[RMDB]
RNA sequence: GGGAACGACUCGAGUAGAGUCGAAAAGCAUGGAUUAACAGUGUGAGAGGGUCCUCACCCCUCACACUCCACCACUUCCAACAGUUUGUUUUGGUUUUAGCUAUUGGCUUCUGUAAUCACCAAGGGAGUCAUACACAAUCUUCGGAUUGUGUAUGACAAAAGAAACAACAACAACAAC
Reactivity to DMS in 0.01 (KOAc 150mM, MgCl2 10mM, bicine 150mM(pH8.5), 24C), signal-to-noise 2, nucleotides 027 to 126: g010c120a110u010g010g030a160u040u030a060a120c260a030g000u010g000u000g020a000g010a110g020g010g010u000c210c200u020c260a300c010c010c000c000u000c010a000c000a000c000u010c090c090a090c100c060a090c050u000u000c010c010a040a060c150a080g010u010u000u010g030u000u010u000u000g000g010u000u000u000u000a090g010c070u010a090u010u000g000g000c000u000u000c050u000g000u000a040a080u010c170a040c020c030a060a070g010g000g010a160
Reactivity to 2A3 in 0.01 (KOAc 150mM, MgCl2 10mM, bicine 150mM(pH8.5), 24C), signal-to-noise 1, nucleotides 027 to 126: g020c040a070u130g030g050a120u160u090a090a000c030a000g010u000g000u000g030a010g080a140g030g010g050u100c040c010u040c050a080c020c020c010c040u000c030a000c000a000c000u000c000c000a050c000c010a010c010u080u020c010c000a020a000c010a200g000u060u060u090g030u030u050u100u110g080g000u050u100u000u000a010g010c030u100a180u140u090g050g010c000u020u000c000u070g200u090a040a080u120c000a020c090c020a020a070g050g030g000a060